[RMDB]
RNA sequence: GGGAACGACUCGAGUAGAGUCGAAAAAAAUACUCACGCAUGAAAGUCAUAGUAAUCUAGGCUAUCCACUUCCGCCGGGUAUGUAUUGCUUUGACUUCUCAUUCCAAGGUGUACCAAACCUCGGAGGAUUUUAAGUCUCCUUCGGGAGACUUAAAAUAAAAGAAACAACAACAACAAC
Reactivity to DMS in 0.01 (KOAc 150mM, MgCl2 10mM, bicine 150mM(pH8.5), 24C), signal-to-noise 1, nucleotides 027 to 126: a080a060a070u000a050c010u020c080a100c200g020c110a100u030g000a030a040a020g000u010c020a040u000a020g050u010a010a010u020c120u000a080g020g020c110u000a040u000c040c040a050c150u020u000c160c150g000c100c080g010g000g030u050a020u000g020u020a050u000u000g020c020u000u020u000g000a030c010u000u010c240u000c000a030u000u020c030c000a020a030g000g000u000g030u000a180c200c280a090a170a030c010c000u000c060g030g010a020g020g000